RNA sequence: GGGAACGACUCGAGUAGAGUCGAAAACGGCGCGUGUAAUGAGCUGACACUGGACCAUCUGGACCCUAUUUCCAAGACGCCAGAAUAUAAGUAUUGUGCGGUGAAAUUGGAGGCCAUUGCCGAUCAACACAACGUCUAUAUUCGUAUAGACGUUGUGAAAAGAAACAACAACAACAAC
Reactivity to 2A3 in 0.01 (KOAc 150mM, MgCl2 10mM, bicine 150mM(pH8.5), 24C), signal-to-noise 7, nucleotides 027 to 126: c040g060g000c030g000c040g040u130g010u060a050a070u070g040a030g040c020u020g060a020c010a010c050u040g040g060a030c010c020a070u030c030u040g070g020a090c000c020c000u050a120u040u070u000c020c010a030a030g070a030c040g020c010c010a020g050a070a030u200a020u040a080a080g100u070a080u150u190g060u060g040c030g010g030u060g050a060a080a090u090u090g050g000a020g020g000c010c020a040u010u060g000c010c010g030a080u060c050a050a080
Reactivity to DMS in 0.01 (KOAc 150mM, MgCl2 10mM, bicine 150mM(pH8.5), 24C), signal-to-noise 9, nucleotides 027 to 126: c110g010g010c080g030c100g010u000g020u000a050a050u010g010a110g020c030u000g010a200c060a030c040u000g010g000a080c060c090a110u000c030u000g000g010a120c100c050c030u000a110u000u000u000c020c040a070a080g010a130c130g010c010c010a040g000a050a090u010a110u010a070a110g010u010a090u000u010g010u010g000c040g010g000u000g000a040a050a150u000u000g010g010a160g010g000c030c040a050u000u000g010c020c030g000a090u010c120a080a170
Structure probing data (2A3 and DMS) for a 177-nucleotide construct. For 2A3 the reverse transcriptase was SuperScript II with manganese. The data come from the RNA Mapping Database (RMDB), library OK2TST. For DMS the reverse transcriptase was MarathonRT. The DMS profile rests on 12,798 reads.